[RMDB]
RNA sequence: GGGAACGACUCGAGUAGAGUCGAAAAUCUCAUGCUGGAGUGCAGAGAGUGAGAAACGUUCCGGCGCUGUAGGAUGUGGCUGCGGCCGAUUAGGUAGAUGGUGGGGUAACGGCCCACCAUGCCGAUAUUUAGGCGAUCUAUUCGUAGAUCGCCUAAAAAAAGAAACAACAACAACAAC
Reactivity to 2A3 in 0.01 (KOAc 150mM, MgCl2 10mM, bicine 150mM(pH8.5), 24C), signal-to-noise 3, nucleotides 027 to 126: u020c000u000c000a060u070g030c020u060g040g100a140g010u120g020c040a020g050a010g000a030g110u120g050a050g090a060a140a020c050g000u050u020c030c000g020g000c040g000c030u050g040u040a020g040g110a100u130g030u060g180g010c010u020g000c040g040g010c000c020g040a070u090u160a040g000g000u010a020g020a090u020g000g010u010g000g030g000g010u000a020a000c010g040g000c000c000c000a000c000c000a000u000g000c000c000g070a070u040a100
Reactivity to DMS in 0.01 (KOAc 150mM, MgCl2 10mM, bicine 150mM(pH8.5), 24C), signal-to-noise 2, nucleotides 027 to 126: u010c000u010c000a040u030g040c020u000g020g020a100g040u030g010c030a060g000a100g000a160g000u020g000a100g000a090a120a090c070g010u010u010c020c000g020g030c070g030c030u000g010u010a040g000g000a090u020g040u030g000g030c050u010g020c090g000g000c000c020g020a080u000u020a080g000g000u000a080g030a030u000g000g000u010g000g000g000g000u000a050a150c300g000g000c000c000c000a000c000c000a000u000g000c000c000g010a120u010a040